[RMDB]
RNA sequence: GGGAACGACUCGAGUAGAGUCGAAAAAGAACCAAGAUCCAGUAAUGGUCAAGUGUGUGUUGGAUAGGCGGGUGGGGCGCAGCGUGACACUUGGUCAAACGAAGCUAACCAUGAGCCGGUAGUAAGUGUAGAGGAAGUUAACAAAAAGAAGUUAACAUACACUAAUUGUGUUCGCACAAUUAGUGUAAAAAGAAACAACAACAACAAC
Reactivity to 2A3 in 0.01 (KOAc 150mM, MgCl2 10mM, bicine 150mM(pH8.5), 24C), signal-to-noise 2, nucleotides 027 to 156: a020g070a010a010c030c000a000a020g000a070u000c010c050a050g050u100a070a090u100g030g020u020c020a030a060g030u030g000u020g000u000g040u110u060g060g060a100u070a060g110g000c040g030g050g000u010g040g000g000g000c030g040c010a020g000c010g040u060g050a010c020a000c080u070u080g090g000u100c080a010a040a000c030g150a030a010g030c020u020a020a040c060c000a040u070g020a010g070c000c020g000g000u000a010g020u040a000a150g060u080g040u100a060g000a010g090g010a100a000g020u030u020a010a000c060a000a180a030a000a000g100a080a050g000u020u020a000a000c020a010
Reactivity to DMS in 0.01 (KOAc 150mM, MgCl2 10mM, bicine 150mM(pH8.5), 24C), signal-to-noise 1, nucleotides 027 to 156: a050g020a110a140c030c030a060a100g000a100u020c010c020a060g000u010a150a070u000g020g000u000c030a010a050g000u000g030u010g080u000g020u000u010g020g000a140u000a100g020g000c040g030g000g020u020g050g000g070g000c050g030c110a090g020c030g010u000g020a060c060a100c140u000u000g020g000u000c010a030a050a130c050g000a080a130g010c030u000a130a090c000c060a070u000g000a140g030c010c020g000g010u000a070g000u000a030a120g000u000g040u010a040g000a110g000g010a120a080g020u000u000a040a000c050a030a030a040a140a150g000a100a120g000u000u000a000a030c070a300